The data come from the RNA Mapping Database (RMDB), library OK1LIB. Structure probing data (2A3) for a 177-nucleotide construct. Conditions: 150 mM KOAc, 10 mM MgCl2 and 150 mM bicine (pH 8.5), 24 C. The 2A3 profile rests on 443 reads.
[RMDB]
RNA sequence: GGGAACGACUCGAGUAGAGUCGAAAAGGAGCAGUGGCAGAUCCUGAGUCAGGAACAUGUAGUACUGGGUGUUGCCGGUAUAGCCCGGGGAGGUCGGCAACGGCACCGCGUUAUCCACCUGGGUGGCAUCCCAGGGCCGUUUCGACGGCCCUGGGAUAAAAGAAACAACAACAACAAC
Reactivity to 2A3 in 0.01 (KOAc 150mM, MgCl2 10mM, bicine 150mM(pH8.5), 24C), signal-to-noise 1, nucleotides 027 to 126: g150g000a110g050c030a010g050u060g090g000c030a000g000a090u100c000c020u070g000a010g070u040c060a000g000g000a020a090c000a040u110g070u230a110g020u080a050c000u040g040g030g040u030g000u050u010g040c000c040g000g000u160a040u120a070g000c030c040c000g010g000g020g000a210g020g020u010c000g030g000c010a060a000c020g000g050c000a060c050c010g040c120g050u190u040a020u050c000c000a000c040c000u000g000g000g000u070g030g000c040